[RMDB]
RNA sequence: GGGAACGACUCGAGUAGAGUCGAAAAGUGCGACAUUUCGAUGUCGCACAAACCCAAAUGGUGGCACCUAACUAAUCAAGCCGGGAAAAGCCAGAUGCCAACGUCCUUAGCCCUUCGGGGCUAAGAAACCCAAAUUGACAUUCGUGUCAAUUUGGGUAAAAGAAACAACAACAACAAC
Reactivity to 2A3 in 0.01 (KOAc 150mM, MgCl2 10mM, bicine 150mM(pH8.5), 24C), signal-to-noise 2, nucleotides 027 to 126: g000u010g000c000g000a000c000a000u060u060u110c220g110a010u020g000u000c000g000c000a000c000a000a000a010c000c000c010a020a080a040u110g030g020u020g030g000c030a160c070c020u060a070a100c060u080a060a100u150c070a110a020g040c050c030g030g020g010a060a110a000a000g020c010c010a020g000a060u100g010c020c020a040a020c030g060u110c020c000u020u010a000g010c000c010c000u050u010c210g060g000g030g000c000u010a000a000g000a020a000
Reactivity to DMS in 0.01 (KOAc 150mM, MgCl2 10mM, bicine 150mM(pH8.5), 24C), signal-to-noise 2, nucleotides 027 to 126: g010u000g000c010g000a000c000a000u000u000u020c120g010a030u000g010u000c000g010c000a000c000a010a090a170c030c000c010a110a050a060u000g000g040u000g010g010c010a030c010c010u000a040a060c030u010a050a200u000c070a090a080g020c070c120g020g050g000a010a040a120a030g000c040c050a020g000a030u000g010c030c020a060a010c060g020u010c090c010u000u000a000g010c000c010c000u000u010c130g010g010g010g010c000u000a000a000g000a050a080